[RMDB]
RNA sequence: GGGAACGACUCGAGUAGAGUCGAAAAAUCUUGGCGAAGUCAGCGCGGAUGGAGCGCGCAACUCCUUACCCUCGCCUUUUUUUUUCCGCUCCCGUUCGCGAAAGCGUUCAGCGGAAAAGGGACCAAAAUUAGUGUGUCCUUUCGAGGACACACUAAUAAAAGAAACAACAACAACAAC
Reactivity to DMS in 0.01 (KOAc 150mM, MgCl2 10mM, bicine 150mM(pH8.5), 24C), signal-to-noise 1, nucleotides 027 to 126: a020u010c110u000u000g010g000c000g000a040a040g000u000c190a150g020c010g000c030g000g020a130u000g000g000a140g000c000g050c110g040c070a150a050c030u010c060c020u000u000a130c160c030c010u010c020g020c000c010u000u000u000u000u000u000u000u000u000c000c010g040c000u030c120c100c060g010u010u000c010g010c020g020a100a090a150g000c010g010u000u000c040a050g000c020g030g000a000a000a020a040g010g000g020a090c080c160a040a070a080